[RMDB]
RNA sequence: GGGAACGACUCGAGUAGAGUCGAAAAAGAUGGCAGGUUCACCCCGUACGGUGCGGAAGUUCGCGCUUCCGUGAAACGCGAAAAUCGGACGGUGUCUGCAAGUCGCAUCGCAAAACCGCGGCAAGUGUUAACCUGGACCUCUUCGGAGGUCCAGGAACAAAGAGGUACUCUUCGGAGUACCUCUUUGAAAAGAAACAACAACAACAAC
Reactivity to 2A3 in 0.01 (KOAc 150mM, MgCl2 10mM, bicine 150mM(pH8.5), 24C), signal-to-noise 2, nucleotides 027 to 156: a000g110a090u080g090g000c020a020g020g000u200u170c020a000c000c020c000c000g000u050a020c030g010g070u070g020c010g010g010a010a000g000u070u300c070g030c030g000c030u000u000c000c000g000u010g050a130a140a010c090g010c060g130a040a020a020a080u120c030g010g020a020c150g010g050u010g000u020c000u000g050c010a010a030g000u020c020g000c030a060u070c070g010c140a030a080a050a050c050c050g000c010g030g020c040a110a110g060u010g050u120u090a040a010c000c010u030g000g000a010c000c000u000c000u010u040c130g120g000a000g000g010u030c000c000a000g000g000a000a000
Reactivity to DMS in 0.01 (KOAc 150mM, MgCl2 10mM, bicine 150mM(pH8.5), 24C), signal-to-noise 2, nucleotides 027 to 156: a170g000a110u020g000g000c020a020g030g020u000u010c040a100c020c030c030c030g000u000a030c040g000g010u000g040c030g010g000a050a110g000u000u000c300g010c300g030c000u010u000c010c120g050u000g020a020a070a070c010g010c050g020a080a040a110a170u000c080g030g020a040c070g040g010u000g030u000c020u000g000c060a050a070g000u000c040g030c000a140u010c030g020c000a060a070a140a120c090c080g020c010g000g000c000a100a100g000u000g020u000u000a080a170c000c000u000g020g010a020c000c000u000c010u000u010c240g020g010a050g020g010u010c000c000a020g000g000a040a020
This 207-nucleotide RNA was probed chemically with 2A3 and DMS. In probing experiments dimethyl sulfate is read out at A N1 and C N3, which are open when not base-paired. The reactions ran in a buffer of 150 mM KOAc, 10 mM MgCl2 and 150 mM bicine (pH 8.5), at 24 C. The 2A3 profile rests on 939 reads. Reactivities are rounded to 0.1 and cut off at 0 and 3. The DMS profile rests on 2,773 reads. For DMS the reverse transcriptase was MarathonRT.